The record gives the reactivity of an RNA of 177 nucleotides to 2A3 and DMS.
RNA sequence: GGGAACGACUCGAGUAGAGUCGAAAAGGCAAAGCAUAUAACUUAACUGUGGGGGCGACUGAGUGUCCUCUAAGCGAAGGCCAAUUAUGGGGUGGGCACUGAGCCUCAUUCCUUUCCAGAACAUUGGCAGCAGAAUGUGUUUCGACACAUUCUGCUGAAAAGAAACAACAACAACAAC
Reactivity to 2A3 in 0.01 (KOAc 150mM, MgCl2 10mM, bicine 150mM(pH8.5), 24C), signal-to-noise 1, nucleotides 027 to 126: g060g020c070a010a070a100g060c050a040u090a050u020a300a050c040u140u050a040a070c060u060g070u130g080g010g020g000g030c000g010a030c170u160g060a090g180u210g010u000c000c000u000c010u000a020a000g000c030g030a000a040g060g000c000c010a000a010u170u090a040u140g010g000g000g010u030g010g010g000c070a010c140u140g030a020g020c000c000u030c060a000u020u070c000c000u000u060u030c020c020a060g090a130a040c020a140u130u160g030g000
Reactivity to DMS in 0.01 (KOAc 150mM, MgCl2 10mM, bicine 150mM(pH8.5), 24C), signal-to-noise 1, nucleotides 027 to 126: g020g000c020a090a070a130g010c060a090u010a120u010a060a100c050u000u000a140a050c060u020g000u010g000g000g000g010g040c040g000a130c230u000g000a090g020u000g020u010c000c030u000c040u010a070a060g000c080g020a040a120g010g000c010c020a010a110u000u000a130u010g010g000g000g010u010g000g000g050c000a110c140u020g000a160g000c010c010u020c040a040u000u000c000c010u000u000u020c010c070a120g000a040a100c170a210u060u000g000g000

The 2A3 profile rests on 733 reads. For DMS the reverse transcriptase was MarathonRT. Conditions: 150 mM KOAc, 10 mM MgCl2 and 150 mM bicine (pH 8.5), 24 C. It was measured as part of the RMDB library OK2TRN.